The data come from the RNA Mapping Database (RMDB), library OK1LIB. An RNA of 177 nucleotides, treated with 2A3 and DMS and read out base by base. The RNA was probed in 150 mM KOAc, 10 mM MgCl2 and 150 mM bicine (pH 8.5) at 24 C.
RNA sequence: GGGAACGACUCGAGUAGAGUCGAAAACGUAGGAUAUGUGAAAGUCCCGCUGGAUAAGGCCGGAUAAUACAGAUGAGCGCAUCAGGGUACAAGUCUCCUGUUCGGCGCACGCUGAGCGUGUUAUGAGAAUAGUCUCGCUGUUCGCAGCGAGACUAUUAAAAGAAACAACAACAACAAC
Reactivity to 2A3 in 0.01 (KOAc 150mM, MgCl2 10mM, bicine 150mM(pH8.5), 24C), signal-to-noise 2, nucleotides 027 to 126: c070g050u010a000g000g160a030u040a120u140g140u050g150a060a020a020g000u000c000c000c000g080c100u030g040g130a300u170a260a240g000g000c000c000g010g020a040u060a060a010u030a130c000a000g080a130u000g100a050g010c110g060c070a070u030c020a030g030g030g070u180a060c080a070a080g000u020c090u070c060c000u000g000u060u000c000g140g050c070g000c020a000c000g000c040u190g020a100g060c090g040u100g080u100u090a240u170g060a080g060
Reactivity to DMS in 0.01 (KOAc 150mM, MgCl2 10mM, bicine 150mM(pH8.5), 24C), signal-to-noise 2, nucleotides 027 to 126: c110g000u020a030g020g010a050u020a030u030g000u000g000a120a080a080g020u000c000c030c030g000c090u000g000g000a070u030a070a080g000g020c090c100g010g000a060u020a030a110u000a110c030a040g010a060u020g000a080g000c160g070c060a070u000c060a040g000g000g000u040a100c170a110a120g030u000c040u000c020c000u000g000u000u020c020g000g000c000g030c000a060c050g040c010u020g000a110g030c030g020u000g000u000u000a140u040g000a070g000